[RMDB]
RNA sequence: GGGAACGACUCGAGUAGAGUCGAAAAAAGCGGGCCCCCGCCGUGCCGGCGCUGCGGCCACCGCUGCUGGCUGUGCUGGUGGCGCCGGGGUCCGAGGCCGCGCCGCCGGCCCGGGCUCACCGACCGGCAUGAAACACAGAUUCGUCUGUGUUUCAUGAAAAGAAACAACAACAACAAC
Reactivity to DMS in 0.01 (KOAc 150mM, MgCl2 10mM, bicine 150mM(pH8.5), 24C), signal-to-noise 3, nucleotides 027 to 126: a080a060g010c010g000g000g000c040c020c010c060c110g020c060c030g010u000g010c040c020g020g010c020g020c060u000g020c030g020g000c010c020a060c120c060g010c030u000g010c060u000g010g010c060u000g020u010g010c000u000g010g020u000g010g010c010g020c130c090g010g000g000g000u000c040c050g000a050g020g010c010c020g000c030g000c250c050g010c040c000g000g000c000c020c060g000g000g010c040u010c060a060c040c030g000a140c030c020g000g010
Reactivity to 2A3 in 0.01 (KOAc 150mM, MgCl2 10mM, bicine 150mM(pH8.5), 24C), signal-to-noise 2, nucleotides 027 to 126: a010a010g070c040g000g010g050c020c000c000c050c020g070c030c010g050u080g050c030c010g030g000c020g010c080u040g000c010g010g020c030c010a030c020c060g020c050u040g050c040u030g090g000c080u160g110u230g170c010u040g040g040u040g000g000c000g010c020c030g030g000g010g010u060c040c000g010a010g000g010c020c010g000c030g020c030c010g020c030c000g000g020c070c010c010g000g020g010c030u040c040a050c010c040g030a060c020c010g010g020
Background
This 177-nucleotide RNA was probed chemically with DMS and 2A3. Values cover nucleotides 27 to 126. The 2A3 profile rests on 3,084 reads. Reactivities are rounded to 0.1 and cut off at 0 and 3.